Structure probing data (2A3) for a 207-nucleotide construct. For 2A3 the reverse transcriptase was SuperScript II with manganese. Conditions: 150 mM KOAc, 10 mM MgCl2 and 150 mM bicine (pH 8.5), 24 C.
RNA sequence: GGGAACGACUCGAGUAGAGUCGAAAAUGCAUCUCUAGGGUGCCACAGGAGAGUCUGUCCAGUGCCCAGAAACACCUGCAAGACCCAGAAGCAGGCUCCAAGAAGCGGGGUGCCACAGUCCAGUGGGGGAAGCGGCCACAUCCCUGUCAUGUGGGCACACUGAGCUAGGAUUCGUCCUAGCUCAGUGAAAAGAAACAACAACAACAAC
Reactivity to 2A3 in 0.01 (KOAc 150mM, MgCl2 10mM, bicine 150mM(pH8.5), 24C), signal-to-noise 1, nucleotides 027 to 156: u040g000c010a020u030c030u000c050u240a180g020g000g110u010g020c020c020a030c040a030g030g040a170g000a000g190u060c030u090g050u110c040c000a020g000u020g000c010c000c010a010g010a020a100a020c050a020c000c010u050g000c000a020a090g040a080c000c010c010a050g010a030a010g010c050a020g020g020c020u050c040c060a260a140g030a090a030g020c060g070g020g020g020u000g010c000c050a040c040a030g100u030c020c000a020g010u100g020g030g020g000g070a010a000g080c030g050g100c070c020a030c020a050u050c000c060c030u060g040u070c020a080u040g010u000g110g020g010c020a000